Chemical mapping of a 207-nucleotide RNA with DMS and 2A3.
The RNA was probed in 150 mM KOAc, 10 mM MgCl2 and 150 mM bicine (pH 8.5) at 24 C.
For DMS the reverse transcriptase was MarathonRT.
For 2A3 the reverse transcriptase was SuperScript II with manganese.
High DMS reactivity at an A or C suggests that its Watson-Crick edge is free.
It was measured as part of the RMDB library OK3TST.
[RMDB]
RNA sequence: GGGAACGACUCGAGUAGAGUCGAAAACAUGCUACGCCUCCAGGCGUCCCAAUCGAAGCGAGGCAAGUAAGAGUUGCCAUGGCCCUUGAUCGAUUGCUGGCAAUCUGAAAACGGGAAUAAGAGCUUAGUCGCGACGACGAGGAGGGCGACAAGGUGGCGUAGAUGGUGAAUUCGUUCACCAUCUACGAAAAGAAACAACAACAACAAC
Reactivity to DMS in 0.01 (KOAc 150mM, MgCl2 10mM, bicine 150mM(pH8.5), 24C), signal-to-noise 2, nucleotides 027 to 156: c070a110u000g010c000u000a040c030g040c010c000u000c010c050a140g020g020c010g010u010c020c000c010a130a140u000c030g000a070a140g010c030g010a060g000g070c040a130a090g020u010a060a160g010a190g000u000u000g030c030c060a080u000g020g010c020c020c030u000u000g000a180u000c060g030a050u010u000g020c040u000g000g020c010a030a050u000c030u020g010a080a040a110a090c080g030g000g000a090a120u000a060a120g010a190g020c030u000u000a170g020u010c010g030c030g000a110c040g030a070c050g010a170g000g020a130g000g020g020c020g000a050c020a070a070g010g010u000g000g020
Reactivity to 2A3 in 0.01 (KOAc 150mM, MgCl2 10mM, bicine 150mM(pH8.5), 24C), signal-to-noise 4, nucleotides 027 to 156: c030a010u200g060c020u050a020c040g000c000c000u030c010c020a050g060g000c000g000u030c000c000c000a030a060u130c090g050a050a000g050c030g030a040g010g020c030a050a000g070u080a040a050g020a030g070u050u050g020c020c030a030u110g080g050c020c000c020u070u060g100a150u080c030g090a100u010u140g020c060u040g090g000c010a010a030u010c040u080g030a020a000a030a070c060g030g000g060a040a040u150a120a050g030a040g070c040u080u110a050g040u100c060g000c020g050a100c000g010a030c010g010a090g060g000a020g020g000g010c030g010a010c020a010a120g020g010u020g020g010